[RMDB]
RNA sequence: GGGAACGACUCGAGUAGAGUCGAAAAAACUUCGGUUGUUGACCCUGAUUCAAUGGGCGCACCGGAAAACGUAACGAUCGAUUCCUUCUCGCGCAUCGUGCAGGGAAUGAGCGUUGAAACAAUGGUCAUCGGAUGGUCUGCCGUCCAAUAUGCGAAAGAAGUAGUCUAUUUUCGAAUAGACUACUUCAAAAGAAACAACAACAACAAC
Reactivity to 2A3 in 0.01 (KOAc 150mM, MgCl2 10mM, bicine 150mM(pH8.5), 24C), signal-to-noise 7, nucleotides 027 to 156: a000a000c080u150u110c040g030g000u070u020g020u120u170g150a230c000c000c000u040g110a260u200u120c200a140a150u120g000g000g000c000g020c000a010c010c000g000g030a050a100a000a010c070g040u080a050a000c030g020a040u050c030g070a040u010u040c010c000u060u050c080u060c060g040c000g010c030a220u170c150g060u090g050c110a020g010g000g000a010a040u060g010a010g000c020g010u030u040g050a090a080a020c050a080a140u170g070g060u110c070a030u090c080g040g010a020u020g010g080u070c140u210g170c040c000g000u000c000c000a060a040u170a060u170g000c030g030a040a080a110
Reactivity to DMS in 0.01 (KOAc 150mM, MgCl2 10mM, bicine 150mM(pH8.5), 24C), signal-to-noise 4, nucleotides 027 to 156: a050a060c070u000u000c010g030g020u010u000g020u000u010g000a140c010c010c010u010g000a280u010u000c170a120a070u000g010g020g030c020g000c080a110c030c030g040g010a050a100a070a050c070g020u010a060a060c040g010a060u010c020g010a110u000u010c020c030u010u000c030u000c030g030c090g020c140a110u000c070g020u000g000c090a110g000g020g000a040a030u000g000a040g010c020g040u010u000g010a110a070a070c070a080a090u010g020g000u000c070a030u000c040g020g000a200u000g020g020u000c090u020g000c010c000g030u000c010c000a060a100u010a070u000g010c050g010a130a110a210